[RMDB]
RNA sequence: GGGAACGACUCGAGUAGAGUCGAAAAAACAGAGACUUGUGGCAGUGUGGUUUGUAAAUUCAGCAAUCCACCGGUAGCGUAAUGAAUCGUGAAGACCCCCGUUGAUAAGGAAUAAGGGCAGGUCACGUACAUCUAUAGGGUUCGCCCUAUAGAUGUAAAAAGAAACAACAACAACAAC
Reactivity to 2A3 in 0.01 (KOAc 150mM, MgCl2 10mM, bicine 150mM(pH8.5), 24C), signal-to-noise 8, nucleotides 027 to 126: a000a000c080a010g090a000g030a040c030u090u080g020u050g090g010c070a090g010u030g010u020g210g050u040u020u000g080u050a130a180a270u200u110c070a020g010c000a010a020u010c010c000a000c010c010g030g030u080a030g020c020g050u050a080a080u120g070a020a020u080c010g020u020g020a020a020g140a160c000c000c000c000c010g040u030u080g100a130u100a160a080g080g040a050a060u170a110a100g000g000g000c040a020g110g000u020c000a000c020g000
Reactivity to DMS in 0.01 (KOAc 150mM, MgCl2 10mM, bicine 150mM(pH8.5), 24C), signal-to-noise 9, nucleotides 027 to 126: a070a050c080a080g000a080g010a070c060u000u010g020u000g010g010c060a100g020u030g020u000g000g000u000u000u010g010u000a060a070a130u020u020c180a120g010c030a020a020u000c020c010a020c010c030g000g000u010a070g010c070g010u010a050a080u020g000a060a050u010c020g000u010g010a050a050g010a180c030c010c000c020c030g010u010u010g010a120u030a090a100g000g010a090a050u030a100a130g000g000g000c040a060g010g000u000c020a020c070g010